[RMDB]
An RNA of 207 nucleotides, treated with 2A3 and DMS and read out base by base.
RNA sequence: GGGAACGACUCGAGUAGAGUCGAAAAUGAUCGCGUCACCCUGAAUCAGGCCGCUUUCGCUAAGCGAAUUCAGCCCGUCACCGCGCAAGAACCCAGCACCAAGAGAUCCGGAAGUUUUACCGUUAUAGUCCGGAACGCGGAAGUUUGUGGAGCCGUCCCGUAUGUUAUUCUUCGGAAUAACAUACGGAAAAGAAACAACAACAACAAC
Reactivity to 2A3 in 0.01 (KOAc 150mM, MgCl2 10mM, bicine 150mM(pH8.5), 24C), signal-to-noise 4, nucleotides 027 to 156: u110g010a030u110c040g000c030g030u010c040a070c020c000c020u010g080a030a070u090c070a080g060g020c010c010g010c040u040u060u040c020g000c070u110a110a070g020c000g020a020a020u050u020c020a030g030c000c010c010g060u050c020a030c050c000g010c000g000c090a070a010g040a080a070c020c030c010a020g020c000a040c060c020a090a020g040a020g010a120u020c000c000g000g030a050a040g000u050u090u110u180a130c020c010g000u060u120a120u100a090g000u040c010c000g020g010a020a050c040g000c000g020g030a030a050g040u070u080u090g030u040g030g030a030g010c020c000g040u050c000
Reactivity to DMS in 0.01 (KOAc 150mM, MgCl2 10mM, bicine 150mM(pH8.5), 24C), signal-to-noise 3, nucleotides 027 to 156: u010g010a040u000c040g020c070g010u000c040a120c040c030c050u010g030a080a120u000c070a060g030g030c020c020g030c040u000u000u010c050g050c040u000a090a160g010c000g030a060a080u000u010c000a030g000c020c000c010g030u000c070a110c030c010g010c060g030c030a070a070g010a090a120c020c020c000a120g020c050a160c040c050a050a110g000a170g010a110u000c000c010g020g020a060a120g010u000u000u010u000a140c090c080g000u000u010a100u000a120g000u010c010c010g020g000a020a030c040g020c040g010g000a080a300g010u000u000u000g010u010g010g010a140g000c020c060g010u000c050

The reactions ran in a buffer of 150 mM KOAc, 10 mM MgCl2 and 150 mM bicine (pH 8.5), at 24 C. Reactivities are given for positions 27 through 156. Source: RMDB library OK3TST, as collected in RNAgym. For 2A3, 2,433 sequencing reads were counted.